[RMDB]
RNA sequence: GGGAACGACUCGAGUAGAGUCGAAAACAGGGGUUUGGGGAAACGGCCGCUGAGUGAGGCGUCGGCUGUGUUUCUCACCGCGGUCUUUUCCUCCCACUCUUGAAACCGAAUUCCUUCGGGAAUUCGGGUCAUAAUAUUGGUUCGCCAAUAUUAUGACAAAAGAAACAACAACAACAAC
Reactivity to DMS in 0.01 (KOAc 150mM, MgCl2 10mM, bicine 150mM(pH8.5), 24C), signal-to-noise 4, nucleotides 027 to 126: c020a030g010g020g010g010u000u000u000g010g000g000g010a010a010a010c060g010g000c010c010g010c020u000g020a130g030u000g010a030g000g010c100g000u010c120g010g010c150u010g020u000g010u000u010u010c000u000c000a010c000c010g000c010g010g010u000c000u000u000u000u000c010c010u000c000c080c170a040c020u000c010u000u010g000a080a110a300c000c000g000a010a000u000u000c000c000u000u020c230g020g000g010a010a000u000u000c010g000g010
Reactivity to 2A3 in 0.01 (KOAc 150mM, MgCl2 10mM, bicine 150mM(pH8.5), 24C), signal-to-noise 4, nucleotides 027 to 126: c010a000g010g010g010g010u020u050u070g010g010g000g010a010a000a000c020g000g010c010c010g020c050u100g030a060g120u000g010a010g010g020c040g050u130c040g180g080c150u120g040u030g020u140u150u050c000u000c010a000c000c010g000c000g000g010u010c000u010u000u010u000c000c000u000c010c010c000a010c000u020c000u010u030g050a150a030a010c010c000g000a010a000u000u000c000c000u020u080c210g050g000g000a010a000u010u000c000g010g000
Overview
An RNA of 177 nucleotides, treated with DMS and 2A3 and read out base by base. For 2A3 the reverse transcriptase was SuperScript II with manganese. The reactions ran in a buffer of 150 mM KOAc, 10 mM MgCl2 and 150 mM bicine (pH 8.5), at 24 C. Source: RMDB library RFMREP, as collected in RNAgym. Values cover nucleotides 27 to 126. The 2A3 profile rests on 9,333 reads.